[RMDB]
RNA sequence: GGGAACGACUCGAGUAGAGUCGAAAAGAUAUGGAGGAUUGGUCUCGCAAAGGUGGGUCGGAAACGACCCAUACUGAACUACGAGCUACAAUCCUCCUAAGUCAAAAGGCCCUGUUCGCAGGGCCAACGUAAAUCUUAAGUUCGCUUAAGAUUUACGAAAAGAAACAACAACAACAAC
Reactivity to 2A3 in 0.01 (KOAc 150mM, MgCl2 10mM, bicine 150mM(pH8.5), 24C), signal-to-noise 4, nucleotides 027 to 126: g020a010u040a020u110g000g000a010g010g000a010u010u020g040g080u110c030u030c080g090c120a110a140a010g010g010u010g000g010g000u000c000g010g010a060a040a010c010g000a000c010c030c000a000u020a080c010u010g010a040a010c030u200a110c230g040a000g010c010u120a150c020a010a010u000c010c000u000c000c000u000a000a000g000u010c020a000a000a020a180g000g000c020c000c000u000g030u030u120c300g000c000a000g000g000g000c000c000a000a000
Reactivity to DMS in 0.01 (KOAc 150mM, MgCl2 10mM, bicine 150mM(pH8.5), 24C), signal-to-noise 8, nucleotides 027 to 126: g000a030u000a300u000g000g010a020g010g010a020u010u000g010g010u010c010u000c010g020c040a040a160a060g000g010u000g000g000g010u000c000g010g010a080a090a220c010g010a010c000c000c000a000u000a010c020u000g010a100a160c190u000a090c020g000a010g000c110u010a150c010a010a010u000c000c000u000c000c000u000a010a070g000u000c040a060a060a140a140g010g010c000c000c000u000g010u000u010c180g020c000a000g000g010g020c010c010a000a010

Overview: This 177-nucleotide RNA was probed chemically with 2A3 and DMS. Reactivities are given for positions 27 through 126. 2A3 adducts were read by reverse transcription with SuperScript II with manganese. Source: RMDB library TTRDEL, as collected in RNAgym.